This 207-nucleotide RNA was probed chemically with 2A3 and DMS. In probing experiments dimethyl sulfate is read out at A N1 and C N3, which are open when not base-paired. Conditions: 150 mM KOAc, 10 mM MgCl2 and 150 mM bicine (pH 8.5), 24 C.
RNA sequence: GGGAACGACUCGAGUAGAGUCGAAAAGGAAGUGUUAGAUGAUGUGUUUUAUACAACAGAUAUGGCUCGUUUAGAUGUGGGUAAACCUGUGUUGAUAUUGUGUAGUAAUAAGAUGUAUGGUGAAAUAUUGUAUAAUACAUUUAGGAAGCGUGGUAUAAUUAUCUGUCAGGUUCGCCUGACAGAUAAUAAAAGAAACAACAACAACAAC
Reactivity to 2A3 in 0.01 (KOAc 150mM, MgCl2 10mM, bicine 150mM(pH8.5), 24C), signal-to-noise 5, nucleotides 027 to 156: g030g010a020a030g030u030g030u100u130a050g020a080u090g010a020u030g050u010g030u040u050u070u080a100u030a040c030a090a010c010a050g070a060u100a040u140g030g000c010u040c070g040u070u030u090a080g000a080u060g020u050g010g020g020u040a070a040a010c010c020u030g010u020g030u080u060g030a050u020a060u130u050g010u000g010u030a040g010u010a010a120u040a150a050g020a040u040g010u060a040u060g020g020u040g030a040a040a030u180a050u080u060g010u000a030u010a030a060u060a040c020a030u090u100u040a060g010g030a060a010g010c020g040u010g020g000u070a040u040a130
Reactivity to DMS in 0.01 (KOAc 150mM, MgCl2 10mM, bicine 150mM(pH8.5), 24C), signal-to-noise 3, nucleotides 027 to 156: g000g010a070a090g010u000g000u000u000a070g010a080u000g010a110u000g040u000g000u010u010u000u000a100u000a120c030a050a070c050a080g000a090u000a090u010g020g010c020u000c060g010u010u000u010a100g020a090u010g020u000g020g030g010u000a050a060a080c050c010u000g000u000g020u000u000g010a090u000a060u000u000g010u000g030u000a110g030u010a040a100u000a070a110g010a070u000g000u000a080u000g030g030u000g010a090a060a100u000a100u000u000g020u000a060u000a060a060u000a040c000a040u000u000u000a090g030g010a060a080g000c050g040u000g010g010u000a090u010a060